[RMDB]
RNA sequence: GGGAACGACUCGAGUAGAGUCGAAAACAUCUCCUUUAGGCAAGGGCACAUACUCUUCGGCUUCAAGGUCAUAUUCUGAAGCAUAAGCAUCCGAUCGACCGACACGCUUGACGGCGCCAGUGUUGGCUUCGAUGUAAAUGACAUCUCCAACAACAACCCCAAAAGAUUGAUUCGUCAAUCUUUUGGGAAAAGAAACAACAACAACAAC
Reactivity to 2A3 in 0.01 (KOAc 150mM, MgCl2 10mM, bicine 150mM(pH8.5), 24C), signal-to-noise 7, nucleotides 027 to 156: c040a080u020c030u030c030c000u030u060u120a060g000g020c030a030a040g030g020g010c040a040c030a080u170a090c040u020c020u080u110c050g050g000c010u030u030c050a060a060g050g000u050c050a090u060a140u210u090c060u060g050a060a020g010c010a040u040a100a030g030c010a010u030c070c060g070a070u050c050g100a130c030c000g020a020c010a010c050g050c010u050u160g090a070c050g030g030c030g030c060c050a080g010u010g010u040u000g020g000c020u060u040c020g020a010u010g020u070a070a220a150u090g020a010c010a020u010c030u030c050c010a030a010c000a020a020c000a020a050c050
Reactivity to DMS in 0.01 (KOAc 150mM, MgCl2 10mM, bicine 150mM(pH8.5), 24C), signal-to-noise 2, nucleotides 027 to 156: c070a200u000c000u000c000c090u000u020u000a100g070g000c090a050a120g010g010g040c030a050c070a100u000a060c050u000c040u000u000c070g070g010c020u000u000c040a060a050g040g020u000c060a150u020a150u000u000c070u000g040a030a130g070c030a070u010a100a300g010c030a020u000c030c030g000a080u040c040g000a160c000c000g040a080c050a040c000g020c000u000u000g000a180c160g040g000c070g010c060c020a150g000u000g020u000u010g000g030c070u000u020c060g060a040u020g000u000a060a080a100u000g070a090c000a060u000c000u000c000c040a060a080c040a050a030c050a090a160c090
An RNA of 207 nucleotides, treated with 2A3 and DMS and read out base by base. Reactivities are given for positions 27 through 156. DMS adducts were read by reverse transcription with MarathonRT. For 2A3 the reverse transcriptase was SuperScript II with manganese. The DMS profile rests on 2,411 reads. Source: RMDB library OK3TST, as collected in RNAgym.